This 177-nucleotide RNA was probed chemically with 2A3 and DMS. Reactivities are rounded to 0.1 and cut off at 0 and 3. For 2A3 the reverse transcriptase was SuperScript II with manganese. The RNA was probed in 150 mM KOAc, 10 mM MgCl2 and 150 mM bicine (pH 8.5) at 24 C. Source: RMDB library OK2TRN, as collected in RNAgym. Values cover nucleotides 27 to 126.
[RMDB]
RNA sequence: GGGAACGACUCGAGUAGAGUCGAAAAACAACAAUGCAAUAGCUCUCAACUUACUAGUCACUCUGGCUAUAAGCACUGAUACAACGAAGUCCGGUGUUAGAGGAAUCAAGAAUGAAGACGGGUUCACCCCGUAUUACCCAUUCGUGGGUAAUACGGGAAAAGAAACAACAACAACAAC
Reactivity to 2A3 in 0.01 (KOAc 150mM, MgCl2 10mM, bicine 150mM(pH8.5), 24C), signal-to-noise 3, nucleotides 027 to 126: a000c040a020a000c020a050a090u140g020c010a040a100u030a110g010c010u000c010u010c050a060a160c030u020u080a020c020u050a010g030u000c000a030c090u160c130u120g040g010c010u020a020u010a130a020g000c030a020c060u030g020a020u030a160c090a130a030c110g120a090a010g030u020c030c020g030g020u030g040u020u070a080g010a010g070g060a020a040u100c010a060a000g050a050a030u100g020a050a010g060a020c020g040g020g020u030u050c020a080c000
Reactivity to DMS in 0.01 (KOAc 150mM, MgCl2 10mM, bicine 150mM(pH8.5), 24C), signal-to-noise 4, nucleotides 027 to 126: a050c060a090a100c100a030a080u000g000c070a140a080u000a080g010c020u000c050u000c040a060a090c060u000u010a040c150u000a050g010u000c050a120c120u000c090u010g010g000c040u000a060u020a060a060g000c040a030c050u000g000a090u010a060c100a060a110c130g000a050a070g000u010c070c030g020g020u000g000u010u020a060g000a100g000g000a070a060u000c040a070a080g000a050a040u000g010a060a060g020a080c100g010g000g020u000u000c080a120c180
Background: For DMS, 3,317 sequencing reads were counted. DMS adducts were read by reverse transcription with MarathonRT.